[RMDB]
RNA sequence: GGGAACGACUCGAGUAGAGUCGAAAACUACGCCAGUGCUUUACGAGCGCCUUCCAGACGAGCAUCCAUGUUGCGAUUGCCGCAACCAGCAAAACGAAAACUUUCAUCGCUCCCUCGGUGAAUUCGUUACACGUGUGCGCAUUGCAUCAACGACGGCCACUGACGCUCAAUUCGUUGAGCGUCAGUGAAAAGAAACAACAACAACAAC
Reactivity to 2A3 in 0.01 (KOAc 150mM, MgCl2 10mM, bicine 150mM(pH8.5), 24C), signal-to-noise 2, nucleotides 027 to 156: c070u170a040c030g030c020c050a030g050u050g070c060u130u130u140a100c090g060a000g010c050g030c030c020u120u040c020c020a040g000a050c040g020a060g000c020a030u030c080c000a030u110g000u000u050g100c030g050a110u000u260g090c090c050g040c050a050a070c010c010a010g070c050a070a070a040a010c020g060a000a000a010a120c080u040u090u040c000a000u020c010g000c000u100c010c010c000u050c000g040g000u000g000a000a000u040u040c010g000u000u060a040c080a040c160g060u070g070u070g060c020g020c060a040u000u120g000c000a000u000c040a080a060c040g060a030c040g020g030c010